[RMDB]
RNA sequence: GGGAACGACUCGAGUAGAGUCGAAAAGAUCAAACUUCGGUUUGAUCAAAAAGCGUACUACGCACGUAGUCAUAGGGAGGAGUUCCCAAAUAGGAACUACCCUUUGAUCUAUGGGAUCGAAGUGCGUAUCGCAAAAAGCCGUACUUCGGUACGGCAAUACUACCCCAUGAUUCGUCAUGGGGUAGUAAAAAGAAACAACAACAACAAC
Reactivity to DMS in 0.01 (KOAc 150mM, MgCl2 10mM, bicine 150mM(pH8.5), 24C), signal-to-noise 3, nucleotides 027 to 156: g010a010u000c010a010a020a010c010u000u010c300g050g010u000u010u000g010a000u010c000a020a010a110a090a060g010c010g000u000a060c050u000a130c000g010c000a060c010g060u020a070g010u000c030a020u000a050g000g000g000a090g030g000a060g020u000u000c000c000c020a020a110a140u010a030g020g000a030a010c010u010a260c000c000c000u010u010u000g010a040u000c030u000a040u000g030g010g010a050u010c020g000a180a130g020u020g010c010g030u010a040u000c030g030c050a020a080a120a140a150g000c000c000g010u010a010c000u000u000c300g050g030u010a010c000g000g010c000a010a030
Reactivity to 2A3 in 0.01 (KOAc 150mM, MgCl2 10mM, bicine 150mM(pH8.5), 24C), signal-to-noise 3, nucleotides 027 to 156: g000a000u010c010a000a000a010c010u030u090c170g050g020u010u000u010g000a000u010c020a000a000a000a040a000g030c050g010u070a080c060u000a010c030g020c000a000c000g060u060a020g020u010c000a010u010a000g010g030g000a140g010g040a020g010u000u010c000c000c000a210a190a060u160a050g000g020a000a000c000u120a200c010c000c000u190u180u090g010a020u000c010u010a030u040g060g060g100a090u170c030g090a090a010g000u030g020c010g030u000a010u160c010g000c060a010a070a060a000a050g000c000c000g010u000a000c000u020u050c150g030g020u000a000c000g000g000c000a000a000

Conditions: 150 mM KOAc, 10 mM MgCl2 and 150 mM bicine (pH 8.5), 24 C.
This 207-nucleotide RNA was probed chemically with DMS and 2A3.
It was measured as part of the RMDB library RNAMAK.
Values are in units of 0.01, from 0 to 300, in steps of 10.
Values cover nucleotides 27 to 156.
The 2A3 profile rests on 3,539 reads.
DMS (dimethyl sulfate) methylates the pairing face of unpaired adenines and cytosines.